[RMDB]
RNA sequence: GGGAACGACUCGAGUAGAGUCGAAAAUAGACUGUGACUGUGACCAUCAGUGCUCCUUCCCAGGAAGCUGGGCAAGCAGGUUUGGCCAUUGUUAAUCAUGGGUUCAAAGUAGUUCUGCACGAAUAUGUCUUUCUGAGACAUUCGUGUCUCAGAAAGAAAAAGAAACAACAACAACAAC
Reactivity to DMS in 0.01 (KOAc 150mM, MgCl2 10mM, bicine 150mM(pH8.5), 24C), signal-to-noise 4, nucleotides 027 to 126: u010a100g020a120c050u010g020u000g010a090c030u000g020u010g010a080c040c030a060u000c070a080g010u000g020c040u000c090c040u000u000c010c010c030a090g000g000a110a170g020c020u010g000g000g020c300a050a050g020c060a050g000g000u000u000u000g020g020c010c010a040u010u000g010u000u010a060a110u000c020a030u000g010g000g000u010u000c060a050a070a080g010u000a040g000u010u000c030u000g010c010a040c060g010a070a080u000a090u010g010
Reactivity to 2A3 in 0.01 (KOAc 150mM, MgCl2 10mM, bicine 150mM(pH8.5), 24C), signal-to-noise 2, nucleotides 027 to 126: u100a000g110a040c060u040g020u030g090a020c010u060g050u080g060a060c030c010a030u100c040a000g070u010g040c030u010c020c020u050u070c000c010c010a000g020g000a060a010g090c010u010g050g000g000c010a030a020g010c020a040g000g000u010u070u110g020g000c030c000a050u060u100g080u120u180a120a040u130c040a060u060g060g000g050u080u120c050a050a040a030g050u070a020g040u130u020c020u020g070c040a010c040g020a050a010u160a070u180g110